[RMDB]
RNA sequence: GGGAACGACUCGAGUAGAGUCGAAAACUUUAUGGCAGCAACGCCAGGCGUGGUCUUUGCUUAAUCAACAUAUUGACAGUGGUGGUGACAAGCCCGCUAAGGCACUUACCUCCGGAAUCAAACCUCACACAAACAGGAUAUUCGUAUCCUGUUUGUGAAAAGAAACAACAACAACAAC
Reactivity to DMS in 0.01 (KOAc 150mM, MgCl2 10mM, bicine 150mM(pH8.5), 24C), signal-to-noise 7, nucleotides 027 to 126: c040u000u010u000a100u010g010g020c060a060g020c100a090a130c300g000c020c030a080g020g010c060g030u000g010g010u010c030u000u000u010g040c090u010u010a110a090u000c110a030a050c080a070u000a100u000u000g020a080c170a090g010u000g010g020u000g020g020u000g000a060c090a070a110g010c030c010c040g010c090u020a050a090g000g010c030a070c100u000u000a060c030c020u000c030c030g010g010a100a060u000c090a060a070a130c080c030u000c120a230
Reactivity to 2A3 in 0.01 (KOAc 150mM, MgCl2 10mM, bicine 150mM(pH8.5), 24C), signal-to-noise 6, nucleotides 027 to 126: c020u130u170u130a120u160g040g000c030a040g000c020a070a080c040g000c020c000a010g060g020c040g080u120g010g020u070c030u050u070u070g030c010u070u160a060a030u140c030a010a080c020a070u140a090u130u180g110a050c020a040g040u040g070g010u020g000g000u000g030a020c010a050a030g020c010c000c010g000c040u050a070a060g020g000c030a010c060u050u060a040c000c000u020c030c010g020g070a030a030u070c050a050a020a120c010c020u060c020a050